[RMDB]
About this RNA: An RNA of 177 nucleotides, treated with DMS and read out base by base. Reactivities are given for positions 27 through 126. For DMS the reverse transcriptase was MarathonRT.

RNA sequence: GGGAACGACUCGAGUAGAGUCGAAAAGAUAUGGAUAGAACUACUUCUAGUAAGGCGAAGAACUCGGAAACGAGGGAGCCUUACGAAGAAGCUAUCCUAAGUCAAAAGCCUAGGUUCGCCUAGGCAACAAAUACAACCGCUUCGGCGGUUGUAUUUGAAAAGAAACAACAACAACAAC
Reactivity to DMS in 0.01 (KOAc 150mM, MgCl2 10mM, bicine 150mM(pH8.5), 24C), signal-to-noise 1, nucleotides 027 to 126: g000a020u000a300u000g000g010a020u000a010g010a010a030c070u000a300c000u000u000c000u000a300g000u000a000a010g000g030c000g000a140a120g000a200a090c010u000c000g000g000a050a080a300c000g000a010g000g000g000a040g010c000c000u000u020a030c000g000a000a100g000a010a000g000c010u000a010u000c000c000u000a020a090g000u020c000a050a110a110a160g010c000c000u010a010g000g000u000u010c210g000c010c000u000a000g000g000c000a010a030